[RMDB]
The record gives the reactivity of an RNA of 207 nucleotides to 2A3. 2A3 is a SHAPE reagent: it acylates the 2'-hydroxyl of flexible nucleotides of all four kinds. The reactions ran in a buffer of 150 mM KOAc, 10 mM MgCl2 and 150 mM bicine (pH 8.5), at 24 C. Values are in units of 0.01, from 0 to 300, in steps of 10.
RNA sequence: GGGAACGACUCGAGUAGAGUCGAAAACAGUAGCUCAAGGCAUUUGGAACGGCGUAAUGACAAUAGGUCGUUCAGUUGCAAACGGUUUUAGAUUCGCAAUCGCAGCGUUGACUACUUCACAAACAUUAAAUGCUAUUAAAACUAAAAUUGCAACCGACACCCUGAGGGAGUUCGCUCCCUCAGGGUGAAAAGAAACAACAACAACAAC
Reactivity to 2A3 in 0.01 (KOAc 150mM, MgCl2 10mM, bicine 150mM(pH8.5), 24C), signal-to-noise 2, nucleotides 027 to 156: c050a000g030u010a000g020c060u000c080a060a000g110g000c030a070u160u090u160g110g000a000a000c000g050g000c040g110u230a120a070u220g040a030c080a120a200u030a110g180g000u010c020g000u030u000c030a010g030u000u000g030c030a010a000a060c080g030g020u030u020u050u110a090g030a110u130u090c050g000c020a020a100u130c130g030c140a080g000c100g060u010u000g000a000c000u030a050c000u120u130c060a060c010a100a230a040c080a090u100u200a100a060a070u050g000c010u010a010u150u020a080a060a110a220c040u040a060a010a030a300u080u020g000c000a020a010c030c030g090a040
For 2A3 the reverse transcriptase was SuperScript II with manganese.